The record gives the reactivity of an RNA of 207 nucleotides to 2A3. The RNA was probed in 150 mM KOAc, 10 mM MgCl2 and 150 mM bicine (pH 8.5) at 24 C. The data come from the RNA Mapping Database (RMDB), library M2RFPK.
RNA sequence: GGGAACGACUCGAGUAGAGUCGAAAAGGCUGUGUUGUGGCGGGGGCGAAACAGGAUCGACAAGGGUGUAAAGAUCGCUCUUUUACUCGGCGUGAUACCACCGUUAUCGGGUCAACAGAGUAGUUGCUAGGGGAACGGGUGUUCGCACCCGUUCCAACAUGGCCUACUUCUUCGGAAGUAGGCCAUGAAAAGAAACAACAACAACAAC
Reactivity to 2A3 in 0.01 (KOAc 150mM, MgCl2 10mM, bicine 150mM(pH8.5), 24C), signal-to-noise 1, nucleotides 027 to 156: g020g010c070u060g030u040g000u060u000g000u050g050g000c000g020g000g000g010g000c000g010a030a010a000c040a010g020g000a000u050c030g010a000c030a120a050g040g080g010u020g050u170a050a110a000g000a020u110c050g010c060u000c000u080u080u010u070a020c020u000c000g000g000c040g010u080g040a030u070a200c040c040a010c020c020g160u110u100a050u220c000g000g000g040u000c010a000a030c070a100g080a010g010u200a000g010u050u000g010c100u080a060g010g040g040g040a000a000c000g000g020g000u020g010u060u020c140g030c120a000c000c000c070g000u030u000c000c000a000a000